[RMDB]
RNA sequence: GGGAACGACUCGAGUAGAGUCGAAAAUAGACAGCAAGAAAGCAGGGUUGAAUAGUGAUUGAGCUUCGAAACGUUAACUUCAGUCGGUCGACGUCUUAACUGGUGCGGAAGACAAUAUCAUGUAAUGCACCUAGUAAAACUUCGGUUUUACUAGGUGAAAAGAAACAACAACAACAAC
Reactivity to DMS in 0.01 (KOAc 150mM, MgCl2 10mM, bicine 150mM(pH8.5), 24C), signal-to-noise 5, nucleotides 027 to 126: u010a100g010a080c070a060g000c060a080a090g010a070a090a090g010c050a050g010g010g010u000u010g000a080a070u000a050g010u010g010a070u000u000g000a150g010c050u010u000c060g000a060a080a060c090g010u010u000a030a040c080u000u000c080a080g010u000c060g010g020u000c050g020a040c050g000u000c050u000u000a060a070c080u010g010g020u010g040c060g010g000a050a040g000a060c070a060a050u000a070u010c070a040u000g010u000a070a080u010g010
Reactivity to 2A3 in 0.01 (KOAc 150mM, MgCl2 10mM, bicine 150mM(pH8.5), 24C), signal-to-noise 3, nucleotides 027 to 126: u010a000g050a020c030a020g040c010a010a090g060a140a040a000g040c020a020g090g000g050u080u080g030a080a050u100a100g040u050g060a030u030u070g020a030g030c000u040u050c030g040a010a090a070c040g010u060u040a030a010c030u080u060c070a070g020u000c020g060g010u050c030g010a030c020g000u000c000u110u040a080a060c040u010g040g010u110g080c030g030g010a030a000g020a020c020a020a000u050a010u110c100a050u090g030u160a080a000u110g040